[RMDB]
RNA sequence: GGGAACGACUCGAGUAGAGUCGAAAAAAUUUGAAACACAUUUAAUCUCUAAAGCUGUUCUCUUAAGGCAUGCAGCAAGGAAACGGGGUAGGUGAAGAUGCCUGGCUGAGCACAUGCUGUAUUCUAGGUUCAUUUUCGAAGAUAUCUUUGCCACAGCUCCAUUGCAUUAGUUCGCUAAUGCAAUGGAAAAAGAAACAACAACAACAAC
Reactivity to DMS in 0.01 (KOAc 150mM, MgCl2 10mM, bicine 150mM(pH8.5), 24C), signal-to-noise 1, nucleotides 027 to 156: a060a040u000u000u000g020a140a100a080c070a080c050a100u010u010u000a090a080u010c030u010c010u000a040a060a160g080c030u000g020u020u000c040u000c030u000u000a150a070g030g000c000a070u010g030c000a110g010c020a050a120g040g010a080a030a050c060g000g030g030g030u000a060g000g040u020g030a080a070g010a080u010g040c050c020u000g020g030c080u000g000a180g030c040a020c080a090u000g020c060u000g030u010a060u000u000c040u000a070g020g000u010u020c090a030u000u000u000u000c030g000a050a070g030a100u000a110u000c010u000u000u000g030c020c040a050c080a130g040c060
Reactivity to 2A3 in 0.01 (KOAc 150mM, MgCl2 10mM, bicine 150mM(pH8.5), 24C), signal-to-noise 3, nucleotides 027 to 156: a000a030u250u130u110g050a090a060a010c070a020c030a030u130u190u180a170a150u070c040u000c030u090a080a040a080g000c020u030g030u150u040c100u040c000u120u100a110a060g070g000c000a020u050g000c000a010g000c020a000a090g020g050a130a050a010c010g040g010g000g040u040a050g000g040u060g040a040a000g030a080u080g000c000c010u030g030g020c040u010g030a020g020c020a010c010a160u070g000c020u010g050u070a110u120u060c070u050a020g050g000u030u040c040a050u060u060u100u170c050g040a030a000g000a050u090a050u110c030u010u070u050g040c030c010a050c020a030g070c040